[RMDB]
RNA sequence: GGGAACGACUCGAGUAGAGUCGAAAACAUUUGGCCAGCAACGAUGGCACGCAGUUCGAACCGCGACUGCGUUCUUAUAACGCUUGGCUAUAAUAAACAUCUAUCUAUCCGUAGCGUCACAAUGUGUGGCUAUGGAAAUGUUCGCAUUUCCAUAGCCAAAAGAAACAACAACAACAAC
Reactivity to 2A3 in 0.01 (KOAc 150mM, MgCl2 10mM, bicine 150mM(pH8.5), 24C), signal-to-noise 4, nucleotides 027 to 126: c050a030u040u020u130g030g010c010c000a020g000c010a010a050c050g090a030u060g000g000c020a000c000g020c000a000g030u100u060c020g040a170a060c120c110g180c060g080a000c000u000g000c010g000u000u000c000u000u150a110u000a040a000c050g000c040u100u140g000g000c000u010a000u030a080a010u060a010a070a030c040a060u030c020u110a050u000c010u030a050u040c040c010g070u040a010g020c000g050u050c040a010c020a180a170u100g070u020g030u040
Reactivity to DMS in 0.01 (KOAc 150mM, MgCl2 10mM, bicine 150mM(pH8.5), 24C), signal-to-noise 1, nucleotides 027 to 126: c110a140u020u000u000g030g000c000c000a000g000c000a210a100c300g000a140u000g000g050c110a020c000g000c000a000g020u030u080c090g000a080a090c070c270g020c100g110a010c000u000g000c000g050u000u010c020u000u010a040u000a130a110c300g030c000u000u040g080g010c000u000a050u020a010a000u040a110a050a050c150a020u000c060u010a080u000c020u000a030u000c020c020g000u010a080g000c050g030u000c060a030c110a050a010u000g000u000g030u000